[RMDB]
RNA sequence: GGGAACGACUCGAGUAGAGUCGAAAACAUCCGGUCGAUCCUGCCGGAGCGCGACGCUCUCCCCAAGGACGAAGCCAUGCAUGCCCGCUCACCCGGGACGCGGCGGACGGCUCAGGACAACGGUUGCACCCCCCGUGGCGGUCCCUGCUAGCCGGACCCUAGGUAACGAGUUCGCUCGUUACCUAGGAAAAGAAACAACAACAACAAC
Reactivity to 2A3 in 0.01 (KOAc 150mM, MgCl2 10mM, bicine 150mM(pH8.5), 24C), signal-to-noise 1, nucleotides 027 to 156: c040a060u030c040c000g000g030u040c010g090a140u000c010c020u020g020c000c000g000g020a030g040c050g000c060g080a100c070g020c050u040c020u050c020c000c000c050a030a060g030g000a010c040g060a040a010g040c010c020a090u170g030c040a010u150g010c010c000c000g010c010u080c010a040c000c000c000g020g000g040a030c030g000c040g000g040c100g010g020a010c030g110g000c030u050c120a060g010g010a000c010a090a040c100g080g090u110u300g050c090a180c000c000c000c020c030c000g000u030g030g030c010g020g000u020c000c020c000u000g000c060u010a040g090c020c030g010g070a040c020